[RMDB]
Notes: Structure probing data (2A3) for a 207-nucleotide construct. It was measured as part of the RMDB library OK3TST.

RNA sequence: GGGAACGACUCGAGUAGAGUCGAAAAGCAGUUUCACUCACGAUAGACUCUUGAGGAAGAGUGUCAGUAUUGCUUCCUCAAGCAAUACAUUACGGUAUGCCAAUACUGUAAUUGACAGCAGAUUGGCAUCUGCUCUAUCUCAUGAAACUGGUGAGUCGUCAGCGUGAGCAUUCGUGCUCACGCUGACAAAAGAAACAACAACAACAAC
Reactivity to 2A3 in 0.01 (KOAc 150mM, MgCl2 10mM, bicine 150mM(pH8.5), 24C), signal-to-noise 2, nucleotides 027 to 156: g050c040a030g000u030u000u000c070a090c030u020c000a010c100g180a190u040a130g020a100c020u000c000u050u020g060a010g030g150a030a010g000a030g000u060g030u100c100a000g000u040a000u030u050g020c000u040u030c020c130u170c160a040a000g000c000a000a000u020a020c000a050u130u010a030c050g130g040u130a000u000g130c010c000a000a050u010a190c040u010g000u130a080a200u080u240g130a080c020a010g000c000a030g010a060u030u040g050g000c020a000u030c000u000g000c000u000c000u000a030u000c010u000c090a010u010g000a020a070a070c090u040g060g000u040g030a070g080u120c070
The RNA was probed in 150 mM KOAc, 10 mM MgCl2 and 150 mM bicine (pH 8.5) at 24 C.